[RMDB]
RNA sequence: GGGAACGACUCGAGUAGAGUCGAAAACAAGAUCGGUGGAUAGCAGCCCUAUCAAUAUCUAGGAGAACUGUGCUAUGUUUAGAAGAUUAGGUAGUCUCUAAACAGAACUAUUUACCUGCUGAACAAAAAAAUCCAAUGGCGUUCGCGCCAUUGGAAACCAACACAAUCUCUUCGGAGAUUGUGUUGGAAAAGAAACAACAACAACAAC
Reactivity to 2A3 in 0.01 (KOAc 150mM, MgCl2 10mM, bicine 150mM(pH8.5), 24C), signal-to-noise 2, nucleotides 027 to 156: c030a090a030g020a110u120c090g040g000u030g030g040a020u030a040g040c010a000g010c010c000c000u030a090u130c080a100a100u090a030u210c060u040a050g030g040a060g030a130a060c050u070g020u040g060c040u100a040u090g010u000u030u010a110g010a260a010g010a120u070u070a070g080g080u070a020g020u020c000u010c000u020a000a040a000c010a000g050a040a040c010u020a020u060u030u010a020c010c010u020g010c070u080g090a130a030c070a050a110a000a000a010a000a040u030c000c000a000a000u000g000g000c030g010u060u050c190g000c000g000c080c010a000u000u000g010g000a010a000a000

Conditions: 150 mM KOAc, 10 mM MgCl2 and 150 mM bicine (pH 8.5), 24 C. This 207-nucleotide RNA was probed chemically with 2A3. Values cover nucleotides 27 to 156. The data come from the RNA Mapping Database (RMDB), library M2RFPK. The 2A3 profile rests on 838 reads.